RNA sequence: GGGAACGACUCGAGUAGAGUCGAAAAGCCUCGCGCUCUUGCCCGGGGUGCUACCCGGCUUGCUCGGAGAAAGCAUGGAGUUUUUGGUCACCAUGACCACCCGCGUUCCCGAUAGCAUGCCCGCGGAUGAAGUAGAGAUAUUCGUAUCUCUACUUCAAAAAGAAACAACAACAACAAC
Reactivity to DMS in 0.01 (KOAc 150mM, MgCl2 10mM, bicine 150mM(pH8.5), 24C), signal-to-noise 9, nucleotides 027 to 126: g010c020c000u010c050g010c300g010c010u020c110u020u020g010c030c060c020g010g000g000g010u010g000c090u020a100c050c030c020g010g010c030u010u010g010c020u000c020g000g000a140g010a070a060a060g010c010a080u020g000g000a170g010u010u010u010u040u010g010g000u010c020a200c240c190a120u030g000a010c010c010a080c070c010c070g000c020g000u000u000c010c000c000g010a110u020a030g020c010a020u000g000c040c020c020g010c100g000g000a250
Reactivity to 2A3 in 0.01 (KOAc 150mM, MgCl2 10mM, bicine 150mM(pH8.5), 24C), signal-to-noise 9, nucleotides 027 to 126: g020c000c010u030c030g010c000g000c010u100c060u200u300g030c020c020c000g000g000g000g000u070g010c020u070a110c010c010c000g000g000c010u010u030g000c000u010c030g080g010a240g030a120a050a010g030c040a110u210g060g020a200g110u090u090u090u180u110g060g000u040c040a070c170c120a210u300g010a010c000c010a020c010c010c010g020c000g020u020u030c010c000c000g010a080u100a040g010c010a010u040g040c010c020c010g060c100g030g010a080
This 177-nucleotide RNA was probed chemically with DMS and 2A3. 2A3 adducts were read by reverse transcription with SuperScript II with manganese.